[RMDB]
RNA sequence: GGGAACGACUCGAGUAGAGUCGAAAACAUGAAUUCGUUCAUGACAGGCGUACUACCGUAGACAUGCUCAGAAGACCACAACAGCUUUCCCAAAUAGGAAAGACAUGUGGUUUCUCGAGCAACAGCUACGGUAUCGCAUUUUAGCCAUUCGUGGCUAUCACUCUAUUCACUUCGGUGAAUAGAGUGAAAAAGAAACAACAACAACAAC
Reactivity to DMS in 0.01 (KOAc 150mM, MgCl2 10mM, bicine 150mM(pH8.5), 24C), signal-to-noise 2, nucleotides 027 to 156: c010a050u000g000a070a060u000u010c260g060u000u000c020a050u000g000a240c080a070g010g020c010g020u000a120c220u000a000c000c000g010u010a040g030a050c100a300u010g020c000u000c000a050g000a020a060g000a030c010c000a010c010a050a080c110a190g030c010u000u000u000c010c000c000a030a160a220u010a090g000g000a010a020a050g020a040c040a300u000g010u010g010g010u000u000u000c030u000c060g000a020g000c000a020a060c070a130g010c000u000a000c000g010g000u000a000u000c040g030c000a170u000u010u000u010a060g000c010c010a120u000u010c260g010u010g030g040c010u000a050
Reactivity to 2A3 in 0.01 (KOAc 150mM, MgCl2 10mM, bicine 150mM(pH8.5), 24C), signal-to-noise 4, nucleotides 027 to 156: c010a000u020g010a020a020u150u150c270g090u060u000c030a000u030g110a090c090a080g220g000c000g040u050a110c080u000a000c000c010g010u000a000g040a110c040a100u040g000c000u000c000a070g010a080a030g110a120c000c000a010c000a090a020c040a070g050c010u030u010u010c010c010c050a260a300a120u300a110g000g020a000a000a000g020a060c050a130u060g000u000g000g000u000u010u000c020u020c050g000a000g000c010a010a030c030a030g000c010u000a000c000g000g020u000a000u000c000g000c000a030u090u080u020u070a000g000c000c010a010u050u060c260g160u090g000g000c000u000a020